Chemical mapping of a 177-nucleotide RNA with 2A3 and DMS. The reactions ran in a buffer of 150 mM KOAc, 10 mM MgCl2 and 150 mM bicine (pH 8.5), at 24 C. For DMS, 1,375 sequencing reads were counted. Reactivities are given for positions 27 through 126. High DMS reactivity at an A or C suggests that its Watson-Crick edge is free. 2A3 adducts were read by reverse transcription with SuperScript II with manganese. The data come from the RNA Mapping Database (RMDB), library OK2TRN. DMS adducts were read by reverse transcription with MarathonRT.

RNA sequence: GGGAACGACUCGAGUAGAGUCGAAAAGCGGUGCCGAUGGGACAGCCGAGCUCACUACCACCGCAGCCACACGUUUCAUGAAGGACCUGCAUUUCACUGGGACAAAUGGAGUUGGUGAGGUAGGCCGAUAGAUGUAGGUCUUCGGACCUACAUCUAUAAAAGAAACAACAACAACAAC
Reactivity to 2A3 in 0.01 (KOAc 150mM, MgCl2 10mM, bicine 150mM(pH8.5), 24C), signal-to-noise 2, nucleotides 027 to 126: g030c000g000g000u010g040c030c000g070a270u030g000g050g050a030c010a040g120c100c070g080a150g050c020u010c020a010c030u030a030c020c000a000c010c000g030c030a010g060c010c010a130c010a010c060g020u000u080u080c070a090u110g090a130a140g020g020a280c010c020u020g020c020a010u070u220u070c010a030c040u090g090g030g070a050c050a040a250a110u280g070g000a140g070u100u090g090g040u020g000a010g000g000u010a010g000g000c010c000g000
Reactivity to DMS in 0.01 (KOAc 150mM, MgCl2 10mM, bicine 150mM(pH8.5), 24C), signal-to-noise 2, nucleotides 027 to 126: g050c000g010g020u000g000c040c050g010a180u000g010g000g000a080c070a130g020c140c170g010a140g010c020u000c000a080c020u010a080c300c010a040c010c020g010c040a120g000c040c020a070c140a060c150g000u000u010u010c000a070u000g000a070a050g010g000a080c040c010u000g000c070a040u010u000u040c070a030c100u000g000g010g000a090c040a070a150a100u000g000g020a110g010u000u000g010g010u020g000a020g010g010u000a020g000g010c010c030g000